[RMDB]
RNA sequence: GGGAACGACUCGAGUAGAGUCGAAAAGAUAUGGACUAUCCUGAGGACACAUCGAUCAGUAAUCGGAAACGAUUACUGGGAGUGUCGCAGGAGUAGUCCUAAGUCAAAACCUUAGUUCGCUAAGGAAGGUGACAUUACCGUUCGCGGUAAUGUCACCAAAAGAAACAACAACAACAAC
Reactivity to DMS in 0.01 (KOAc 150mM, MgCl2 10mM, bicine 150mM(pH8.5), 24C), signal-to-noise 1, nucleotides 027 to 126: g040a070u000a300u020g020g000a060c010u000a010u000c000c030u000g170a070g070g000a070c040a000c090a300u000c140g010a040u020c000a000g020u000a000a000u000c000g000g010a110a110a190c000g020a000u000u000a000c000u010g000g030g000a010g020u000g010u000c000g030c130a040g000g000a070g000u010a000g000u000c000c000u000a030a060g000u010c110a100a150a150a160c010c010u080u050a020g000u030u000c230g030c000u000a010a000g000g010a020a100
Reactivity to 2A3 in 0.01 (KOAc 150mM, MgCl2 10mM, bicine 150mM(pH8.5), 24C), signal-to-noise 1, nucleotides 027 to 126: g040a030u080a100u120g000g000a000c010u000a010u020c000c020u040g120a140g300g050a010c020a000c020a300u300c040g150a160u070c030a020g000u000a000a000u010c010g040g000a030a110a050c030g000a000u000u060a000c000u000g000g010g010a010g030u050g010u000c050g000c130a000g000g020a030g070u040a000g010u020c000c000u000a060a020g040u000c070a040a070a080a210c010c000u060u010a020g020u050u040c300g030c200u030a020a010g070g070a070a140

Background:
This 177-nucleotide RNA was probed chemically with DMS and 2A3. For DMS, 798 sequencing reads were counted. For 2A3, 1,902 sequencing reads were counted. 2A3 is a SHAPE reagent: it acylates the 2'-hydroxyl of flexible nucleotides of all four kinds. For 2A3 the reverse transcriptase was SuperScript II with manganese.